[RMDB]
Structure probing data (DMS and 2A3) for a 177-nucleotide construct. For DMS, 1,702 sequencing reads were counted. For DMS the reverse transcriptase was MarathonRT. It was measured as part of the RMDB library OK2TRN. 2A3 adducts were read by reverse transcription with SuperScript II with manganese. For 2A3, 1,626 sequencing reads were counted.
RNA sequence: GGGAACGACUCGAGUAGAGUCGAAAAUGGUGUCGACUCAGGUAUUACCAGCUUUUCGGGCAACUACAACGCCGACCUGGCGCUAUUUCGCGGCACGCAUAACCGAUCCAGUGAAAACGUCCAAUUCUCAUACCGUUAGCUUCGGCUAACGGUAUGAAAAAGAAACAACAACAACAAC
Reactivity to DMS in 0.01 (KOAc 150mM, MgCl2 10mM, bicine 150mM(pH8.5), 24C), signal-to-noise 2, nucleotides 027 to 126: u010g020g000u000g020u000c000g030a070c100u010c040a090g010g000u000a040u000u000a080c060c030a050g000c120u000u000u010u010c050g000g000g010c050a120a090c250u010a120c240a060a070c110g000c040c010g000a020c250c070u000g010g030c030g000c040u010a060u000u000u010c070g030c050g030g000c030a000c030g010c030a040u000a070a110c070c050g020a070u000c040c020a060g000u010g000a080a030a030a060c120g000u000c010c060a100a140u010u000c050
Reactivity to 2A3 in 0.01 (KOAc 150mM, MgCl2 10mM, bicine 150mM(pH8.5), 24C), signal-to-noise 2, nucleotides 027 to 126: u080g000g040u080g000u030c030g020a120c030u000c120a030g030g030u080a070u090u180a120c040c020a050g080c040u000u100u110u110c040g000g030g000c030a070a060c080u160a090c040a100a020c050g020c020c000g070a150c030c020u030g050g000c000g000c010u100a150u040u090u060c020g000c000g020g090c040a030c060g010c030a010u040a060a070c000c020g000a060u060c010c010a000g080u030g220a040a060a030a050c000g100u000c000c000a030a040u260u000c030